[RMDB]
RNA sequence: GGGAACGACUCGAGUAGAGUCGAAAAAUCAGAGGGCGCUAUCAUGCAAACUAGGAUUGUCUGCUCAUGCACAGAACCCACUACCGAUAACUAACAGUGCAUGAAGGUUAGUUAUUCCAUAUUAAUUAAAACUCGUAAUUCUUCGGAAUUACGAGAAUCAUUACGCUUCGUUCGCGAAGCGUAAUGAAAAAGAAACAACAACAACAAC
Reactivity to DMS in 0.01 (KOAc 150mM, MgCl2 10mM, bicine 150mM(pH8.5), 24C), signal-to-noise 2, nucleotides 027 to 156: a090u010c020a060g020a100g000g040g030c200g030c070u000a070u000c080a080u000g000c000a090a080a120c060u000a140g060g030a100u000u000g040u000c020u010g000c050u000c080a080u020g050c050a070c000a060g000a000a080c010c010c000a180c110u010a240c040c030g000a060u000a040a070c060u000a030a030c030a130g010u000g000c050a030u020g010a100a120g000g010u000u000a030g020u010u000a050u010u000c100c040a100u000a140u000u000a060a230u010u000a070a070a120a150c020u000c000g030u000a010a000u010u000c000u030u010c300g090g020a020a000u000u000a000c010g000a000g020a030a030
Reactivity to 2A3 in 0.01 (KOAc 150mM, MgCl2 10mM, bicine 150mM(pH8.5), 24C), signal-to-noise 5, nucleotides 027 to 156: a000u030c010a030g020a040g050g030g000c020g000c030u080a150u300c060a080u300g000c030a010a020a020c020u050a030g050g030a020u010u030g050u050c030u050g050c000u010c010a010u030g000c010a020c010a040g040a130a110c010c010c030a040c050u090a120c010c080g010a010u000a020a000c010u000a000a000c000a040g040u020g070c000a010u000g000a010a030g100g000u000u010a000g000u020u000a010u070u040c010c000a060u090a090u300u230a210a100u130u140a070a080a060a080c000u000c000g000u000a000a000u000u000c000u000u050c170g090g010a000a000u000u000a000c000g000a000g000a000a010